Structure probing data (DMS and 2A3) for a 177-nucleotide construct.
The RNA was probed in 150 mM KOAc, 10 mM MgCl2 and 150 mM bicine (pH 8.5) at 24 C.
For 2A3 the reverse transcriptase was SuperScript II with manganese.

RNA sequence: GGGAACGACUCGAGUAGAGUCGAAAAGUCGUUGAGCGUCAGGCUACCGGGAGCGGCAGCGCUCAGCGGCAGAUCGGCAACCGCGCCGUCCAGCGAGGGAAGCAUCUGGCUAGUGGCCAGUCCUUCCCCCUCCCUUAACGUUCGCGUUAAGGGAGGGAAAAGAAACAACAACAACAAC
Reactivity to DMS in 0.01 (KOAc 150mM, MgCl2 10mM, bicine 150mM(pH8.5), 24C), signal-to-noise 4, nucleotides 027 to 126: g010u000c000g010u000u010g010a000g010c040g020u000c040a300g000g010c010u010a080c010c040g000g000g000a070g000c010g020g040c250a170g010c020g000c000u010c000a000g000c000g000g010c000a010g000a250u010c030g000g020c020a090a120c070c030g000c130g000c010c000g010u000c020c010a050g000c070g010a120g000g000g000a030a010g030c150a040u040c000u010g000g000c000u010a120g010u000g000g000c000c010a000g020u020c300c000u000u010c000c000
Reactivity to 2A3 in 0.01 (KOAc 150mM, MgCl2 10mM, bicine 150mM(pH8.5), 24C), signal-to-noise 8, nucleotides 027 to 126: g010u010c000g000u000u000g000a000g010c010g070u130c100a070g150g000c010u060a100c030c020g040g030g050a030g030c030g040g000c030a010g010c000g000c000u000c010a000g000c000g000g000c000a000g050a050u040c010g000g000c010a030a030c020c020g010c030g000c020c010g020u020c000c010a050g060c040g100a100g010g010g000a000a010g010c040a070u090c010u010g010g000c010u050a090g140u180g250g000c010c000a000g000u020c000c000u000u000c000c000